[RMDB]
RNA sequence: GGGAACGACUCGAGUAGAGUCGAAAAGAUGUCGUUUGGUGUGGGUACAUCGGGUGGCACUACAAUGACUAAGACGCAUCUUGGUUGUUGUGAACUCGUGGCUAGAUGCGUCUAGUUAUGAGUGUUCAAUGUUACUGUACCCACAGUGAUAUUGAAACGAUUGGUCUAUGUUCGCAUAGACCAGUCGAAAAGAAACAACAACAACAAC
Reactivity to 2A3 in 0.01 (KOAc 150mM, MgCl2 10mM, bicine 150mM(pH8.5), 24C), signal-to-noise 9, nucleotides 027 to 156: g110a040u120g030u090c090g050u060u080u190g230g050u050g010u010g010g000g000u020a020c020a070u110c120g050g020g060u100g020g000c010a010c020u200a110c060a060a080u050g000a000c000u010a070a040g000a000c000g000c000a000u010c010u020u070g050g000u010u010g010u030u040g030u030g070a100a050c040u030c100g050u070g030g000c030u020a000g000a000u000g000c010g010u000c000u000a000g000u000u010a020u060g010a000g000u020g020u080u190c030a040a040u100g030u060u120a080c060u030g000u000a000c000c000c000a000c000a000g010u020g010a030u030a050u150u180g060a080a070a030
Reactivity to DMS in 0.01 (KOAc 150mM, MgCl2 10mM, bicine 150mM(pH8.5), 24C), signal-to-noise 6, nucleotides 027 to 156: g010a070u000g010u000c020g030u010u010u000g010g010u000g030u010g010g020g020u000a030c010a050u000c050g020g020g030u000g010g130c030a040c010u000a060c060a090a060u000g020a030c010u000a060a080g020a060c050g010c050a030u000c000u000u010g130g020u000u000g000u010u040g010u000g010a090a080c060u010c050g000u030g010g010c020u000a030g020a030u000g020c140g030u000c000u000a020g010u000u000a030u000g000a070g020u000g010u000u000c040a050a080u000g010u000u010a060c050u010g010u000a040c060c010c030a090c000a000g030u000g000a060u000a060u000u000g000a080a090a260